[RMDB]
RNA sequence: GGGAACGACUCGAGUAGAGUCGAAAAUCGUCAUGAUUCGGCCGGGUGUCGUCGAGAUGAACCACCGCCGGGGAUGUGCCGGUUCGGCGGGCGAGCGUGAUCCCAGCGGCUCGGUCGACGGGUGCGCCGGGCCUAAAGUUUUCGAACUUUAGGCCCGAAAAGAAACAACAACAACAAC
Reactivity to DMS in 0.01 (KOAc 150mM, MgCl2 10mM, bicine 150mM(pH8.5), 24C), signal-to-noise 1, nucleotides 027 to 126: u000c040g000u030c040a050u010g000a200u010u000c090g070g090c020c030g000g000g020u010g000u060c040g020u010c040g010a150g000a130u000g060a160a100c020c070a090c040c030g020c000c000g010g000g010g000a110u000g020u040g000c040c000g040g000u000u000c000g000g010c000g000g000g000c060g000a090g000c020g020u020g040a130u030c020c000c000a300g000c000g000g050c010u000c040g000g000u030c020g000a050c110g000g000g040u000g000c000g040c050
Reactivity to 2A3 in 0.01 (KOAc 150mM, MgCl2 10mM, bicine 150mM(pH8.5), 24C), signal-to-noise 3, nucleotides 027 to 126: u020c010g080u070c050a090u190g080a140u050u020c000g010g000c000c000g030g020g000u060g050u120c050g020u020c030g020a030g030a120u130g110a050a020c020c030a020c020c000g000c010c000g000g020g000g070a190u200g030u080g130c060c010g050g000u090u090c020g000g000c000g020g040g040c080g030a050g010c050g010u030g050a030u020c000c000c000a020g000c030g050g030c000u000c010g030g030u040c000g010a030c010g030g000g050u100g010c010g000c020